[RMDB]
RNA sequence: GGGAACGACUCGAGUAGAGUCGAAAAUUAAUACUGCUACAUUUUUAAGACCCUUAGUUAUUUAGCUUUACCGCCCAGGAUGGGGUGCAGCGUUCCUGCAAUAUCCAGGGCACCUAGGUCCAGCCUUCAUGCCUCAUGCCGUUCGCGGCAUGAGGAACAGGUAGAAGAUCUUCGGAUCUUCUACCUGAAAAGAAACAACAACAACAAC
Reactivity to 2A3 in 0.01 (KOAc 150mM, MgCl2 10mM, bicine 150mM(pH8.5), 24C), signal-to-noise 2, nucleotides 027 to 156: u090u010a040a090u060a210c060u070g040c030u070a060c080a160u040u090u030u080u240a170a080g110a130c000c010c000u040u040a040g080u110u010a150u210u170u060a060g020c000u100u060u040a070c050c040g000c010c000c010a030g010g010a010u040g020g010g070g040u000g000c000a010g000c040g070u140u090c000c000u020g030c010a000a090u010a030u150c010c010a020g020g010g010c000a020c020c000u030a020g070g000u040c020c020a010g030c090c020u070u130c060a030u110g010c020c000u030c000a010u000g000c000c000g040u040u060c140g010c000g150g000c000a010u000g000a000g000g010a000a000
Conditions: 150 mM KOAc, 10 mM MgCl2 and 150 mM bicine (pH 8.5), 24 C. This 207-nucleotide RNA was probed chemically with 2A3. The data come from the RNA Mapping Database (RMDB), library M2RFPK.